[RMDB]
RNA sequence: GGGAACGACUCGAGUAGAGUCGAAAAUUCGGCGUUUAAUGUCCCUUUUGUUGAGGCCUCCUUCUUUGGACUCCCUAACAGCGCCCAUUAAAUAUGAUCCGAUAAAAUGUCGCAUUCAAAAGUGAACGCCGUCAUUAAUAUUCGUAUUAAUGACGGCAAAAGAAACAACAACAACAAC
Reactivity to 2A3 in 0.01 (KOAc 150mM, MgCl2 10mM, bicine 150mM(pH8.5), 24C), signal-to-noise 4, nucleotides 027 to 126: u070u040c030g010g000c010g000u040u050u070a110a040u130g040u060c020c000c000u000u090u040u070g040u020u040g030a030g000g020c000c010u040c000c000u050u060c020u070u030u040g010g020a040c040u030c000c000c020u030a120a020c030a060g010c030g030c000c010c010a030u110u190a100a120a080u180a070u160g060a060u050c010c010g020a020u070a100a190a010a030u090g040u040c000g000c010a030u050u080c080a120a050a090a090g070u070g060a090a010c070
Reactivity to DMS in 0.01 (KOAc 150mM, MgCl2 10mM, bicine 150mM(pH8.5), 24C), signal-to-noise 2, nucleotides 027 to 126: u010u030c020g020g010c020g000u010u010u040a050a090u020g000u000c000c000c020u010u050u000u000g000u000u010g000a110g010g010c080c050u000c030c010u020u020c110u030u010u000g000g000a100c070u000c000c010c000u000a060a070c130a100g000c040g010c020c010c060a070u010u020a030a050a030u030a100u010g000a060u010c040c030g020a090u000a060a050a070a070u020g000u010c030g020c080a070u000u000c090a040a010a070a090g000u010g010a060a120c260
About this RNA
The record gives the reactivity of an RNA of 177 nucleotides to 2A3 and DMS. As a SHAPE reagent, 2A3 marks flexible, mostly unpaired nucleotides at the ribose 2'-OH. For 2A3, 3,718 sequencing reads were counted. 2A3 adducts were read by reverse transcription with SuperScript II with manganese. The reactions ran in a buffer of 150 mM KOAc, 10 mM MgCl2 and 150 mM bicine (pH 8.5), at 24 C.